Annotation: The record gives the reactivity of an RNA of 177 nucleotides to DMS and 2A3. For 2A3, 14,849 sequencing reads were counted. For DMS the reverse transcriptase was MarathonRT. For DMS, 7,662 sequencing reads were counted. It was measured as part of the RMDB library OK1LIB.
[RMDB]
RNA sequence: GGGAACGACUCGAGUAGAGUCGAAAAUGCGGAGUUCGGCCCCGCCGUCGGGGUGGUUGGUGGCGUUGGCAUGUCCGCCGUGGGUGGUGGUGAGGGCGGCGACGAUGGCCAGGCCGAGGCCGCUGCCGAGGACUAUGAGAUUCGUCUCAUAGUCCUCAAAAGAAACAACAACAACAAC
Reactivity to DMS in 0.01 (KOAc 150mM, MgCl2 10mM, bicine 150mM(pH8.5), 24C), signal-to-noise 3, nucleotides 027 to 126: u010g000c020g010g000a060g020u030u000c010g000g000c010c010c040c300g000c000c010g030u000c020g000g000g000g000u040g000g010u030u030g000g010u030g000g000c130g010u030u010g000g030c150a070u020g000u060c030c040g010c000c010g000u020g000g000g010u040g000g000u040g000g000u020g000a130g000g010g000c050g000g000c050g000a060c050g010a050u010g000g000c010c070a190g010g040c020c020g000a050g010g000c000c010g020c010u010g000c030c090
Reactivity to 2A3 in 0.01 (KOAc 150mM, MgCl2 10mM, bicine 150mM(pH8.5), 24C), signal-to-noise 7, nucleotides 027 to 126: u150g000c010g020g020a090g300u050u000c010g010g000c000c010c000c020g020c000c000g010u020c000g000g030g020g060u130g040g030u170u170g040g090u100g030g020c120g060u100u190g060g010c090a090u160g090u080c030c030g000c000c000g060u160g030g020g030u240g030g060u120g020g050u190g100a170g010g010g020c050g020g010c030g020a040c020g000a010u020g010g000c010c010a000g000g000c000c000g000a000g010g010c000c000g000c020u020g010c020c030